[RMDB]
RNA sequence: GGGAACGACUCGAGUAGAGUCGAAAAGAUAUGGACGUAGACAUGCAUCUCACAUCGGAAACGAUGUACGUGAGAUGCAACAGCUACAGUCCUAAGUCAAACCGUGUGAGGUUCGCCUCACACGGAACUAGCCAAGUUUCUUCGGAAACUUGGCUAGAAAAGAAACAACAACAACAAC
Reactivity to DMS in 0.01 (KOAc 150mM, MgCl2 10mM, bicine 150mM(pH8.5), 24C), signal-to-noise 1, nucleotides 027 to 126: g000a060u000a300u000g000g000a020c000g040u000a010g000a050c090a300u010g000c000a000u000c000u000c000a070c000a110u000c000g000g000a110a110a300c000g000a020u000g000u020a060c300g000u000g000a000g000a040u000g010c000a000a000c160a160g000c040u000a000c000a130g010u000c000c000u000a020a070g000u000c090a050a090a100c000c000g000u000g030u000g050a000g010g020u000u000c300g040c000c000u000c000a000c000a000c000g000g000a000a030
Reactivity to 2A3 in 0.01 (KOAc 150mM, MgCl2 10mM, bicine 150mM(pH8.5), 24C), signal-to-noise 1, nucleotides 027 to 126: g000a020u080a060u140g040g000a000c000g000u000a020g000a080c060a070u070g010c000a030u030c000u000c010a060c000a000u030c030g020g060a120a010a060c050g000a010u030g080u240a050c190g100u070g020a000g020a020u010g010c000a000a000c000a010g030c000u000a010c110a080g000u000c000c000u010a090a040g100u050c090a060a060a110c000c000g000u010g000u010g010a000g030g050u040u230c300g090c030c010u000c000a030c020a000c010g020g000a000a020

Chemical mapping of a 177-nucleotide RNA with DMS and 2A3.
Reactivities are given for positions 27 through 126.
DMS adducts were read by reverse transcription with MarathonRT.
Conditions: 150 mM KOAc, 10 mM MgCl2 and 150 mM bicine (pH 8.5), 24 C.
For DMS, 833 sequencing reads were counted.